[RMDB]
RNA sequence: GGGAACGACUCGAGUAGAGUCGAAAACCAGCACGGCCCCGCUUAAUGCGGCAAGGUCAGAUCCAAACAGCAUCUGAAAAAGCGCCGCACAAAGAAAUAGCCCCGCUAAAGGCGACAUAUAGACCAGCACGGUCCAUCAGUUCGCUGAUGGACCGUGAAAAGAAACAACAACAACAAC
Reactivity to 2A3 in 0.01 (KOAc 150mM, MgCl2 10mM, bicine 150mM(pH8.5), 24C), signal-to-noise 1, nucleotides 027 to 126: c040c000a030g000c060a010c030g020g050c000c000c050c000g000c030u060u100a090a000u160g000c010g050g010c000a030a000g080g080u000c010a030g000a010u090c170c090a060a130a110c000a100g010c000a040u000c000u000g020a140a020a000a000a000g070c110g060c040c010g050c000a010c000a040a050a030g050a000a160a000u130a000g020c050c020c000c020g020c120u130a190a070a000g060g000c000g000a000c010a000u120a020u040a010g060a010c000c000a000g040